[RMDB]
RNA sequence: GGGAACGACUCGAGUAGAGUCGAAAAUUGGACGGGCCGGCGGCGGUGAUGGUGAAGCGGCGGAAAAUCUCUUGCAGGAUGACCGCUCCCUCGGUGAGGGCGAACCCGAAGCCGAGGCAUCGGCGCAAGCCGUACUGUGCUUCGGCACAGUACGGCUAAAAGAAACAACAACAACAAC
Reactivity to DMS in 0.01 (KOAc 150mM, MgCl2 10mM, bicine 150mM(pH8.5), 24C), signal-to-noise 3, nucleotides 027 to 126: u040u010g000g010a060c110g030g010g000c060c050g010g040c090g000g020c060g040g000u000g010a130u000g000g020u010g000a140a090g030c090g010g000c020g000g000a010a070a050a030u000c000u000c020u020u010g000c280a090g000g030a030u010g000a300c000c000g000c020u000c150c010c030u000c000g010g000u010g000a290g020g030g000c300g010a090a070c020c020c000g000a170a190g000c000c030g010a000g010g010c110a000u010c000g020g020c000g000c120a080
Reactivity to 2A3 in 0.01 (KOAc 150mM, MgCl2 10mM, bicine 150mM(pH8.5), 24C), signal-to-noise 3, nucleotides 027 to 126: u110u050g030g040a010c060g040g020g000c050c020g030g000c060g000g020c050g000g110u100g040a150u110g000g070u090g020a090a020g010c000g060g000c010g020g000a030a290a020a000u000c010u020c040u090u130g020c070a010g050g060a040u030g030a060c000c000g000c020u030c010c000c000u000c000g030g020u240g020a150g030g020g000c130g070a230a300c000c000c000g000a030a000g000c010c000g000a010g000g020c010a030u070c010g010g050c090g000c060a060